[RMDB]
RNA sequence: GGGAACGACUCGAGUAGAGUCGAAAAUAGCUAUCUCGUCUAGCUCUAGCCAUGCCAUGCUAGUCUAGUAGCGCUAGUGGAUCUCCAUGCUAGCAUGUCAUGCAUGCGACCAUGUACAUGUGAGUACAAAGGAACUCACAUUCGUGUGAGUUCCUUUAAAAGAAACAACAACAACAAC
Reactivity to DMS in 0.01 (KOAc 150mM, MgCl2 10mM, bicine 150mM(pH8.5), 24C), signal-to-noise 4, nucleotides 027 to 126: u010a100g000c030u000a040u000c050u000c130g010u000c140u000a040g000c040u000c090u000a090g000c080c060a040u000g010c090c050a020u010g010c000u010a020g020u000c070u000a070g010u000a090g010c170g010c070u000a050g020u010g000g010a080u000c110u010c030c040a090u010g010c010u000a070g000c020a010u000g010u000c050a020u000g000c090a100u000g000c070g000a130c130c030a070u010g020u000a030c030a140u000g020u010g000a110g020u000a060c130
Reactivity to 2A3 in 0.01 (KOAc 150mM, MgCl2 10mM, bicine 150mM(pH8.5), 24C), signal-to-noise 3, nucleotides 027 to 126: u070a010g000c010u010a020u070c080u010c110g110u050c060u030a000g030c020u020c050u090a040g050c050c010a050u090g000c010c010a020u040g010c000u000a000g060u050c020u010a020g050u080a020g070c080g050c150u030a020g130u050g190g060a120u040c030u020c060c010a040u100g000c000u000a010g000c010a000u030g010u000c020a010u060g020c030a040u100g020c010g050a060c040c010a070u050g020u060a030c050a050u180g080u100g100a040g020u020a010c020